[RMDB]
An RNA of 177 nucleotides, treated with DMS and 2A3 and read out base by base. It was measured as part of the RMDB library M2PK50. The DMS profile rests on 2,331 reads.
RNA sequence: GGGAACGACUCGAGUAGAGUCGAAAAAGUAUCGGGUUCGCCCGAUACUAGAGCACCACUCCUGCGGGAGUUAAGGCCAAACGCACAGCCGGGUGCAAAGCCAACUCAAGGGUUUCGACCCUUGAAAGAACUAGAAGACUUUCGAGUCUUCUAGUUCAAAAGAAACAACAACAACAAC
Reactivity to DMS in 0.01 (KOAc 150mM, MgCl2 10mM, bicine 150mM(pH8.5), 24C), signal-to-noise 3, nucleotides 027 to 126: a050g020u010a010u000c000g020g010g020u000u010c210g030c010c000c010g010a010u000a000c000u010a040g000a210g020c020a030c020c040a120c020u000c000c000u010g030c210g010g010g010a020g020u010u010a110a100g020g010c020c100a040a100a120c190g000c150a060c140a180g000c020c010g000g010g000u010g030c020a030a070a080g000c020c030a060a080c170u010c010a010a000g000g000g000u000u000u000c220g000a030c010c000c000u000u010g000a010a100a120
Reactivity to 2A3 in 0.01 (KOAc 150mM, MgCl2 10mM, bicine 150mM(pH8.5), 24C), signal-to-noise 1, nucleotides 027 to 126: a000g000u000a000u000c000g000g000g030u020u050c200g070c030c000c000g010a000u000a000c000u000a000g000a030g000c010a010c010c000a000c000u020c010c000u050g050c280g070g010g000a000g010u020u160a060a010g010g010c010c010a100a160a080c150g000c070a080c040a070g010c000c000g030g000g000u000g000c000a000a030a020g020c010c010a040a030c030u000c020a000a000g040g000g020u010u060u080c150g080a020c000c000c000u000u000g000a000a000a010